Record summary: Structure probing data (2A3 and DMS) for a 177-nucleotide construct. For DMS the reverse transcriptase was MarathonRT. 2A3 adducts were read by reverse transcription with SuperScript II with manganese. Conditions: 150 mM KOAc, 10 mM MgCl2 and 150 mM bicine (pH 8.5), 24 C. The data come from the RNA Mapping Database (RMDB), library OK1LIB.

[RMDB]
RNA sequence: GGGAACGACUCGAGUAGAGUCGAAAAAUUCGAUUCCUUACAAGCUUGAGAGAGAGAACCGGAGGGAUUAUGUGGGAUUGUUCAGCUACUCGGGCAGAUGAGUUGAGGACAAAAUCAUGGGGAAGGACCACCUCCAAACAUUCGUGUUUGGAGGUGGAAAAGAAACAACAACAACAAC
Reactivity to 2A3 in 0.01 (KOAc 150mM, MgCl2 10mM, bicine 150mM(pH8.5), 24C), signal-to-noise 3, nucleotides 027 to 126: a000u070u050c020g050a020u090u060c010c010u130u220a080c080a110a120g000c030u030u090g030a030g000a010g010a000g020a000g010a150a030c020c030g030g030a070g150g050g010a080u050u100a140u300g070u060g010g010g010a070u090u030g050u050u030c000a040g050c020u040a050c010u020c000g020g080g000c070a000g010a090u190g030a020g070u060u060g020a060g000g060a020c040a020a060a020a060u090c070a130u110g000g000g000g000a090a050g030g050a000
Reactivity to DMS in 0.01 (KOAc 150mM, MgCl2 10mM, bicine 150mM(pH8.5), 24C), signal-to-noise 2, nucleotides 027 to 126: a130u050u060c080g010a060u010u000c020c100u000u030a110c230a060a170g000c090u000u010g000a100g010a090g010a120g000a110g020a110a110c060c050g000g000a040g000g010g000a110u000u030a070u000g040u000g020g020g000a110u030u000g020u000u010c050a040g000c060u000a040c040u000c010g000g000g020c180a050g000a080u020g000a010g000u000u030g010a100g010g000a010c060a030a050a060a090u070c090a030u000g000g010g000g020a130a090g000g000a200